[RMDB]
RNA sequence: GGGAACGACUCGAGUAGAGUCGAAAAGCCAUGAGUCGCAACGCAAAGCCGCGGCAAGUAGAGUUAGCGAGAAGAGACUAGGCUUUGGUUUCUUCAAGUGAAGCGGUCACCAAUCAGGUGUGGUAGUAGGAGCCUGCAUGGUUCGCCAUGCAGGCAAACAUCUAGUUAGUUUCGACUAACUAGAUGUAAAAGAAACAACAACAACAAC
Reactivity to DMS in 0.01 (KOAc 150mM, MgCl2 10mM, bicine 150mM(pH8.5), 24C), signal-to-noise 3, nucleotides 027 to 156: g000c020c030a090u000g000a130g010u000c010g030c020a060a110c060g000c010a090a140a250g000c010c010g020c060g000g010c040a030a140g010u000a080g000a160g000u000u000a210g030c010g010a300g000a030a050g000a070g030a030c020u000a100g010g010c140u000u000u000g010g010u000u000u000c000u010u010c000a050a300g020u000g000a050a110g020c020g040g000u000c030a050c020c020a060a120u000c110a070g030g030u000g010u020g010g010u000a040g010u000a100g020g000a090g000c000c000u000g000c010a010u000g010g040u010u000c300g000c020c000a030u000g030c020a020g030g030c000a010a010
Reactivity to 2A3 in 0.01 (KOAc 150mM, MgCl2 10mM, bicine 150mM(pH8.5), 24C), signal-to-noise 3, nucleotides 027 to 156: g050c010c000a080u110g030a020g060u060c020g010c080a050a050c030g020c090a080a100a020g010c020c010g020c040g040g000c080a060a040g040u100a020g040a060g040u130u120a020g030c010g020a040g000a050a000g020a000g000a000c020u030a050g110g140c000u160u140u130g020g010u010u010u000c000u010u000c030a050a010g020u030g090a090a020g010c020g020g020u030c020a020c050c010a050a160u230c100a090g020g000u040g020u050g060g050u090a080g010u020a060g060g170a030g020c000c010u000g000c010a010u000g040g000u060u070c100g030c050c010a000u000g010c010a000g010g000c000a010a020
This 207-nucleotide RNA was probed chemically with DMS and 2A3.
For 2A3, 2,535 sequencing reads were counted.
For DMS, 6,611 sequencing reads were counted.
The reactions ran in a buffer of 150 mM KOAc, 10 mM MgCl2 and 150 mM bicine (pH 8.5), at 24 C.
It was measured as part of the RMDB library M2RFPK.